[RMDB]
RNA sequence: GGGAACGACUCGAGUAGAGUCGAAAAGAUAAGGAGUGCGAAAGCAAUCACUCUGUACACUAAGAUUGCAAGCACUCUGUAUCAAAAGUAGCGCAGGGAAAACCCAGUGUACAGAGAAGCGCUAAAAGGAUAGUUGUACCUUCGGGUACAACUAUCCAAAAGAAACAACAACAACAAC
Reactivity to DMS in 0.01 (KOAc 150mM, MgCl2 10mM, bicine 150mM(pH8.5), 24C), signal-to-noise 1, nucleotides 027 to 126: g020a020u010a060a140g030g000a000g040u000g000c000g020a130a040a120g010c000a000a000u000c000a210c060u000c040u000g020u010a000c040a060c050u010a130a130g000a000u000u000g000c000a050a170g000c000a000c020u000c000u000g020u040a000u010c070a160a030a000a050g000u000a060g000c000g000c000a210g000g020g000a020a050a040a150c000c000c000a050g000u020g000u000a040c000a000g000a020g000a300a110g000c050g040c010u000a020a080a080a080
Reactivity to 2A3 in 0.01 (KOAc 150mM, MgCl2 10mM, bicine 150mM(pH8.5), 24C), signal-to-noise 1, nucleotides 027 to 126: g010a000u020a150a090g000g000a000g000u000g000c010g180a130a150a010g000c000a000a000u010c000a090c050u000c000u000g000u000a000c030a020c020u140a180a000g000a030u000u000g040c050a170a190g000c000a000c000u000c000u000g000u040a000u040c010a020a020a030a030g070u010a000g010c010g000c010a020g030g030g040a030a020a000a120c030c000c020a000g000u010g000u000a000c000a000g000a030g010a040a010g010c060g000c100u100a000a000a000a080